The record gives the reactivity of an RNA of 177 nucleotides to DMS. For DMS, 2,183 sequencing reads were counted. Values cover nucleotides 27 to 126. The reactions ran in a buffer of 150 mM KOAc, 10 mM MgCl2 and 150 mM bicine (pH 8.5), at 24 C. It was measured as part of the RMDB library OK2TST.

RNA sequence: GGGAACGACUCGAGUAGAGUCGAAAAAGAUUACUCCAGGCGCUCGCGUGGAAGGUCAGGUGUUGCUUGAAGGCCGUGAUUUGUAUGGCAAAGAUGUGGAUCCUGUGGCAGUUCGCCGAGAUGUUAGAUCCCGUAUAGCUUUCGAGCUAUACGGGAUAAAAGAAACAACAACAACAAC
Reactivity to DMS in 0.01 (KOAc 150mM, MgCl2 10mM, bicine 150mM(pH8.5), 24C), signal-to-noise 2, nucleotides 027 to 126: a090g010a100u030u010a090c050u010c000c090a100g000g010c060g030c080u010c070g000c060g000u010g000g010a070a050g010g010u000c040a070g010g000u000g020u010u010g030c030u000u000g010a130a130g000g010c020c010g040u000g000a100u010u000u010g010u010a040u000g000g000c040a040a100a100g000a070u010g000u000g020g010a060u000c080c010u010g040u000g010g000c030a080g010u010u000c080g020c020c020g000a100g010a070u010g010u010u010a120g000